[RMDB]
RNA sequence: GGGAACGACUCGAGUAGAGUCGAAAAUACCGCGCUGCUGGCCCGUGAAAUUCACGCCGACAUUCUUGUGAUCACCACUGGCGUCGAAAAAGUGUGUAUUCACUUUGGCAAACCGCAGCAGCAGGCGCUCUUGCUGGAGAUUCGUCUCCAGCAAGAGAAAAGAAACAACAACAACAAC
Reactivity to 2A3 in 0.01 (KOAc 150mM, MgCl2 10mM, bicine 150mM(pH8.5), 24C), signal-to-noise 2, nucleotides 027 to 126: u050a020c000c040g020c030g020c010u030g020c020u080g130g000c020c050c040g000u020g020a040a040a060u090u050c000a000c010g010c020c050g040a020c020a050u190u160c050u220u080g010u000g020a110u190c080a040c190c000a010c050u040g000g030c020g030u030c030g090a030a110a000a000a010g020u030g000u000g030u040a070u030u000c010a000c020u120u090u140g000g000c000a070a130a180c050c030g030c010a020g000c000a000g000c000a000g110g060c070g020
Reactivity to DMS in 0.01 (KOAc 150mM, MgCl2 10mM, bicine 150mM(pH8.5), 24C), signal-to-noise 2, nucleotides 027 to 126: u010a110c040c000g010c090g030c000u000g000c000u000g000g020c020c030c300g020u000g000a060a040a130u000u020c030a050c010g020c110c030g020a070c070a030u000u000c030u010u010g000u000g000a190u010c180a240c180c060a020c000u010g000g030c210g000u000c030g010a080a070a060a060a050g000u000g010u000g000u000a050u000u000c000a000c000u000u010u000g000g010c080a040a040a160c210c140g030c060a020g030c000a020g040c000a180g030g010c120g000